[RMDB]
Chemical mapping of a 207-nucleotide RNA with 2A3. The RNA was probed in 150 mM KOAc, 10 mM MgCl2 and 150 mM bicine (pH 8.5) at 24 C. Source: RMDB library OK3TST, as collected in RNAgym. The 2A3 profile rests on 613 reads.
RNA sequence: GGGAACGACUCGAGUAGAGUCGAAAACACCGGCACGAUCUCGUCGACCGGCUCCCCUUGGGCGAGCAUCGCGGUUCCGAUGACCCCGGUCACCUGACGAAAGGGCCGGUAUGACGACUGUUACCGCUACCGUCCACGACAUCUCCGGACGCCCGGAACAUGCAGGCAUAUUCGUAUGCCUGCAUGUAAAAGAAACAACAACAACAAC
Reactivity to 2A3 in 0.01 (KOAc 150mM, MgCl2 10mM, bicine 150mM(pH8.5), 24C), signal-to-noise 2, nucleotides 027 to 156: c020a020c000c000g000g010c040a090c090g060a290u170c130u070c180g070u120c070g010a190c020c010g000g040c020u060c050c030c000c040u100u170g030g000g000c020g030a150g030c030a100u170c170g000c050g070g030u170u000c020c030g020a140u130g080a160c040c000c030c000g010g040u040c070a090c010c030u080g120a180c080g090a180a070a110g020g010g000c000c050g000g020u050a050u060g070a010c010g020a010c010u050g050u110u060a010c020c040g000c000u020a020c000c030g020u010c010c020a070c010g070a110c030a180u040c010u010c070c120g250g000a300c210g020c010c020c030g020g000a030